Structure probing data (2A3 and DMS) for a 177-nucleotide construct. Values cover nucleotides 27 to 126.
RNA sequence: GGGAACGACUCGAGUAGAGUCGAAAACGCGUCCUGUUCGCAGGACGCGAAUUAAGGAAACCUUCCUGGUGGCGAGAAUAAAUGAGCACUCGCGCUCAAAAAAUAGGUGGGCGUUCGCGCCCACCAAAGGGAUUAGUUAUUUCGAUAACUAAUCCCUAAAAGAAACAACAACAACAAC
Reactivity to 2A3 in 0.01 (KOAc 150mM, MgCl2 10mM, bicine 150mM(pH8.5), 24C), signal-to-noise 2, nucleotides 027 to 126: c000g010c000g000u000c010c010u000g050u020u060c230g000c080a000g000g040a020c000g000c000g010a000a020u100u040a090a040g070g010a030a100a120c010c020u060u050c020c000u070g110g000u040g070g020c050g020a020g040a170a100u110a170a090a130u150g010a060g020c010a020c050u050c060g000c020g020c010u030c040a120a120a000a000a000a010u220a080g000g020u000g000g020g020c040g020u010u060c140g010c000g010c110c000c000a000c000c000a020a010
Reactivity to DMS in 0.01 (KOAc 150mM, MgCl2 10mM, bicine 150mM(pH8.5), 24C), signal-to-noise 2, nucleotides 027 to 126: c020g020c020g020u010c010c000u000g040u000u010c190g050c000a030g020g000a030c010g030c000g000a010a020u000u000a100a120g010g000a110a070a150c070c060u000u000c010c010u000g020g020u010g020g070c000g000a030g000a160a140u000a030a100a090u010g000a050g000c040a130c080u010c080g010c040g000c000u000c030a000a010a090a050a050a070u000a070g000g010u000g000g000g030c010g030u010u010c170g010c000g010c000c000c000a000c000c010a000a040
The reactions ran in a buffer of 150 mM KOAc, 10 mM MgCl2 and 150 mM bicine (pH 8.5), at 24 C.